[RMDB]
RNA sequence: GGGAACGACUCGAGUAGAGUCGAAAAGAUAUGGAUCAGAACUACUUCCCACUCAGGCAACAGCUGACUACUAGCUCGGAAACGAGCUAGUAGUCAGACAUGCCUGUUGGGAAGCUGAUCCUAAGUCCUCUAAAACAACCUUCGGGUUGUUUUAGAGAAAAGAAACAACAACAACAAC
Reactivity to DMS in 0.01 (KOAc 150mM, MgCl2 10mM, bicine 150mM(pH8.5), 24C), signal-to-noise 1, nucleotides 027 to 126: g010a140u010a280u000g010g010a050u010c000a000g000a070a060c050u010a300c000u000u000c000c010c000a000c270u010c000a010g010g040c000a020a070c300a240g020c000u010g000a020c000u020a010c020u000a000g010c000u020c000g040g000a110a140a300c000g010a010g000c000u000a000g020u000a000g000u000c000a000g000a010c040a100u010g020c000c010u000g000u010u010g000g010g010a010a000g030c000u000g000a010u000c000c000u000a040a090g010u010c040